RNA sequence: GGGAACGACUCGAGUAGAGUCGAAAACGAGCUUGCCUAUUGAUAGAAGGGUAUUUGUGGGGAGAUGGGUGCCAAGUAGAACAUUUGAAGAGUUAAGUAUCCAGUUCACGUUAUUUCCCAUUUUACCUACUCCUGGUCAAUUCGUUGACCAGGAGUAAAAAGAAACAACAACAACAAC
Reactivity to 2A3 in 0.01 (KOAc 150mM, MgCl2 10mM, bicine 150mM(pH8.5), 24C), signal-to-noise 1, nucleotides 027 to 126: c030g010a000g000c030u060u060g070c010c000u080a100u130u090g110a060u070a130g150a180a050g050g000g040u070a050u080u050u100g060u050g000g000g000g000a050g000a060u000g030g020g000u000g030c000c020a100a000g020u000a010g070a060a010c030a120u010u030u220g110a110a040g080a000g070u070u040a060a020g020u040a030u020c000c000a010g000u000u040c010a010c120g000u020u040a040u050u030u020c000c020c000a020u110u150u060u040a010c030c000
Reactivity to DMS in 0.01 (KOAc 150mM, MgCl2 10mM, bicine 150mM(pH8.5), 24C), signal-to-noise 2, nucleotides 027 to 126: c020g020a120g010c050u000u000g000c000c010u020a080u010u000g000a130u010a070g010a090a110g000g000g020u000a070u000u000u010g020u000g000g000g030g000a070g000a120u000g020g010g000u000g010c070c030a070a080g010u020a090g020a040a050c090a130u020u010u000g010a060a100g000a100g000u000u020a080a070g000u000a040u000c050c030a090g000u000u000c050a100c090g000u000u000a080u010u000u000c000c000c000a140u000u000u020u020a070c180c120

Chemical mapping of a 177-nucleotide RNA with 2A3 and DMS. In probing experiments dimethyl sulfate is read out at A N1 and C N3, which are open when not base-paired. For 2A3 the reverse transcriptase was SuperScript II with manganese. Values cover nucleotides 27 to 126. The RNA was probed in 150 mM KOAc, 10 mM MgCl2 and 150 mM bicine (pH 8.5) at 24 C. The DMS profile rests on 1,826 reads.